[RMDB]
RNA sequence: GGGAACGACUCGAGUAGAGUCGAAAAAAAAAGGUAUAUCAAGCGAAGAUCGAAAGAUCAUGCUCGAUAGAUAUACAUCCCACAGGAAACUGAAAAUCGAGCAAUCGCUAAUAGCGAAAGCAAAAAAACCUCUUAGUUAGUUCGCUAACUAAGAGGUAAAAGAAACAACAACAACAAC
Reactivity to DMS in 0.01 (KOAc 150mM, MgCl2 10mM, bicine 150mM(pH8.5), 24C), signal-to-noise 1, nucleotides 027 to 126: a010a060a070a110a120g000g000u000a020u000a050u010c010a080a110g030c000g010a110a110g000a010u010c000g000a090a030a070g010a000u000c010a060u010g030c100u020c000g020a030u010a120g010a010u000a000u000a010c030a060u000c000c000c020a160c160a030g000g010a050a110a090c060u000g000a040a100a070a040u000c140g000a140g020c030a080a190u000c000g050c000u000a090a000u000a050g010c020g000a040a070a290g020c020a000a000a100a080a020a060